RNA sequence: GGGAACGACUCGAGUAGAGUCGAAAACAAACGACGAUACGUUCGCACUGGCAGCCUAAGGGCCGCCGUCCUCUGCCUAGUUCACUGACGGGCUAGUGUCGCAAGACCGGUAGCAAUACCGACAGAGGUCAUAUACGUCAGUUAAGCCUGUCCGGCGCAUCUUCAGGAACUUCGGUUCCUGAAGAUGAAAAGAAACAACAACAACAAC
Reactivity to 2A3 in 0.01 (KOAc 150mM, MgCl2 10mM, bicine 150mM(pH8.5), 24C), signal-to-noise 2, nucleotides 027 to 156: c060a020a050a020c080g070a010c010g040a070u120a240c160g080u200u030c060g000c040a050c140u110g020g000c000a020g010c020c020u160a210a300g050g000g010c010c010g010c000c000g020u020c000c000u030c010u010g000c000c010u010a020g000u020u010c060a020c020u000g000a000c010g010g000g030c000u000a000g000u020g050u110c030g060c110a160a000g010a000c010c000g040g000u000a000g060c020a060a090u000a040c000c000g010a010c000a000g000a000g010g000u000c010a020u130a030u080a130c010g000u000c000a000g000u020u080a120a000g010c010c030u100g020u170c030c070g000g000c020g000

About this RNA: Source: RMDB library ARCHII, as collected in RNAgym. Structure probing data (2A3) for a 207-nucleotide construct.